[RMDB]
Chemical mapping of a 207-nucleotide RNA with DMS and 2A3.
For 2A3, 5,172 sequencing reads were counted.
DMS adducts were read by reverse transcription with MarathonRT.
Reactivities are given for positions 27 through 156.
For 2A3 the reverse transcriptase was SuperScript II with manganese.
The reactions ran in a buffer of 150 mM KOAc, 10 mM MgCl2 and 150 mM bicine (pH 8.5), at 24 C.
It was measured as part of the RMDB library OK3TST.
RNA sequence: GGGAACGACUCGAGUAGAGUCGAAAAAUCGUCACCACUGAAAAGCAGCUUGGACUUAAUAUGGUUCGAGUGCUUGUAGAUCUUGAGGAAUUUGAGAGUAUCGUGGUACGCUGUAUACCCUCCCAGAUGCAAUGCAUAAACCAUGUCACACAUAUGAAUACUGAUAAUCGUUCGCGAUUAUCAGUAUAAAAGAAACAACAACAACAAC
Reactivity to DMS in 0.01 (KOAc 150mM, MgCl2 10mM, bicine 150mM(pH8.5), 24C), signal-to-noise 4, nucleotides 027 to 156: a050u000c060g020u000c060a100c020c010a060c040u000g000a090a080a050a050g000c010a060g040c010u000u010g010g010a020c000u010u010a100a150u010a110u010g020g020u010u000c020g040a040g050u000g010c010u010u010g010u000a120g000a100u000c010u000u000g020a090g020g020a140a140u000u000u000g000a050g020a090g030u000a070u000c130g040u000g030g020u000a050c040g010c070u020g030u000a110u000a090c030c030c020u010c010c010c020a210g010a070u000g000c030a060a060u010g020c040a120u000a070a090a090c050c060a070u000g010u000c030a050c070a060c080a120u000a090u010g010a140
Reactivity to 2A3 in 0.01 (KOAc 150mM, MgCl2 10mM, bicine 150mM(pH8.5), 24C), signal-to-noise 7, nucleotides 027 to 156: a000u040c010g030u040c060a020c030c010a010c060u120g040a090a050a000a000g000c020a030g120c000u010u000g000g000a010c020u080u120a140a100u200a300u300g020g000u000u000c000g000a010g000u000g000c000u000u010g010u040a060g010a060u010c010u020u030g030a030g070g250a300a210u110u060u080g030a030g000a010g010u110a050u110c050g010u020g000g010u010a010c020g010c040u020g030u120a060u070a150c020c010c000u030c000c010c000a010g020a030u060g000c040a110a000u080g000c020a050u130a070a040a030c070c010a040u080g020u080c010a020c010a010c020a080u080a030u200g120a060